[RMDB]
RNA sequence: GGGAACGACUCGAGUAGAGUCGAAAAACGUUUGAGUUUUUCAGUCGUGUCUAUGUUCAGGUUUAUGAUAUGCUGUGGUUGAUUCUGUUGAUUCACACGUUUCGCUUCCAUAUAGUGUGUUAACGGAUUGUUAUUAAUGUUUCGACAUUAAUAACAAAAAAGAAACAACAACAACAAC
Reactivity to DMS in 0.01 (KOAc 150mM, MgCl2 10mM, bicine 150mM(pH8.5), 24C), signal-to-noise 9, nucleotides 027 to 126: a040c060g010u010u010u010g010a130g000u000u000u000u000u000c030a080g010u000c060g020u000g010u000c030u000a060u010g010u000u000c060a060g010g010u000u000u010a050u010g010a080u010a050u010g010c030u000g020u000g000g010u000u000g000a080u000u000c050u000g000u000u010g000a080u000u000c020a020c030a060c050g010u000u000u000c070g010c080u000u000c030c030a080u010a090u010a100g010u000g010u010g010u000u010a040a060c070g010g010a200
Reactivity to 2A3 in 0.01 (KOAc 150mM, MgCl2 10mM, bicine 150mM(pH8.5), 24C), signal-to-noise 6, nucleotides 027 to 126: a000c050g010u040u040u130g050a060g000u050u030u000u040u030c020a020g030u050c030g030u020g020u030c040u060a110u080g080u050u100c060a050g020g090u030u100u110a070u100g080a030u030a040u200g040c010u020g010u060g130g030u080u050g010a080u070u030c020u050g040u060u040g030a070u060u060c000a000c000a000c030g010u010u070u110c070g020c030u070u000c020c050a040u100a040u060a150g080u040g020u010g020u090u040a020a020c000g020g030a030
Chemical mapping of a 177-nucleotide RNA with DMS and 2A3.